RNA sequence: GGGAACGACUCGAGUAGAGUCGAAAACGGAGGUAGCUGAAGAGUCCAGUGGCGUGCGUGCGGUGGCGGCCAGCCACCGGAUCGGCGUCUUGCAGGUCGGGGAGGCCGCCCUGGUGGCGGCGGUUGCAAUCAGGGGAUGUUUCGACAUCCCCUGAUUAAAAGAAACAACAACAACAAC
Reactivity to DMS in 0.01 (KOAc 150mM, MgCl2 10mM, bicine 150mM(pH8.5), 24C), signal-to-noise 2, nucleotides 027 to 126: c100g000g000a060g010g010u010a060g020c040u000g000a090a080g010a140g000u000c020c020a100g020u010g010g030c020g050u000g010c010g060u000g000c030g000g030u000g010g010c000g010g010c160c180a140g020c020c020a020c000c000g010g000a020u000c030g000g010c030g010u000c060u010u010g000c060a060g000g000u000c040g020g020g000g000a160g000g000c010c010g010c010c010c020u000g000g020u010g020g020c030g000g020c030g000g010u010u020g010c120